This 177-nucleotide RNA was probed chemically with DMS. The RNA was probed in 150 mM KOAc, 10 mM MgCl2 and 150 mM bicine (pH 8.5) at 24 C.

[RMDB]
RNA sequence: GGGAACGACUCGAGUAGAGUCGAAAAAGCCAGUCCAGAGAGUUCCUUCCUUUCCCCUCAGUCUCCUCUGCUUGUGCACACUGAGUGUGCCCCUCUGCUGCCUAAGAAUCCCCCGUCUCCUCGGGGACCUAGGUGUUUGGUUCGCCAAACACCUAGGAAAAGAAACAACAACAACAAC
Reactivity to DMS in 0.01 (KOAc 150mM, MgCl2 10mM, bicine 150mM(pH8.5), 24C), signal-to-noise 1, nucleotides 027 to 126: a090g000c040c020a070g040u010c040c070a120g030a080g000a250g000u000u000c030c040u000u010c010c010u000u000u000c050c020c000c080u010c070a120g010u000c040u000c020c000u010c040u000g000c080u010u010g000u000g030c000a040c070a050c050u000g010a190g040u000g020u000g000c010c040c000c010u000c010u000g000c040u000g000c030c020u000a080a120g010a100a050u000c070c000c020c050c030g010u000c120u030c050c060u000c020g020g000g010g010a050